[RMDB]
Chemical mapping of a 177-nucleotide RNA with DMS. For DMS, 943 sequencing reads were counted. DMS adducts were read by reverse transcription with MarathonRT. The reactions ran in a buffer of 150 mM KOAc, 10 mM MgCl2 and 150 mM bicine (pH 8.5), at 24 C. Source: RMDB library OK2TRN, as collected in RNAgym.

RNA sequence: GGGAACGACUCGAGUAGAGUCGAAAACUCAUGACGUUAUCGUUGAGGGACCAGUUCAAGAUUCUCUUGUUGUCAGAGGGCGGAACGUAGUUAGUGGCCAUGUCACGAAUGCACUCAACCUGCAACACAGAAGGAUGGGUUUCGACCCAUCCUUCUGAAAAGAAACAACAACAACAAC
Reactivity to DMS in 0.01 (KOAc 150mM, MgCl2 10mM, bicine 150mM(pH8.5), 24C), signal-to-noise 1, nucleotides 027 to 126: c000u000c020a070u000g010a020c180g000u000u010a060u010c110g020u000u000g000a130g000g000g000a250c120c070a160g000u000u000c080a020a110g010a140u000u010c000u000c010u000u000g000u000u000g000u000c210a020g000a070g000g000g020c140g000g000a030a050c020g020u010a080g000u010u000a070g000u000g000g010c050c150a150u020g020u000c040a020c040g000a080a080u000g000c050a110c010u010c040a060a060c070c110u020g000c100a020a100c060a250